[RMDB]
RNA sequence: GGGAACGACUCGAGUAGAGUCGAAAAACUUUCCCUGCAAUACGCUAUUCGCCUUAGAUGUAUCUGGGUGGCUGCUCCACUAAAGCCCGGGAAUAUGCAACCAGUUACAUUUGAGGCCAUUUGGGCUCAUCACGAGAUACUUCGGUAUCUCGUGAUGAAAAGAAACAACAACAACAAC
Reactivity to 2A3 in 0.01 (KOAc 150mM, MgCl2 10mM, bicine 150mM(pH8.5), 24C), signal-to-noise 1, nucleotides 027 to 126: a010c080u060u100u000c000c000c040u010g040c060a050a060u070a110c060g000c040u070a070u040u160c020g010c010c010u020u010a000g000a000u020g000u000a010u000c000u010g000g090g010u080g150g000c010u010g000c030u030c000c030a120c080u220a270a070a090g090c020c080c030g050g000g040a050a040u200a060u170g000c010a030a000c000c000a000g000u000u000a000c010a000u000u010u000g000a000g020g000c010c000a020u030u040u060g090g060g020c010u030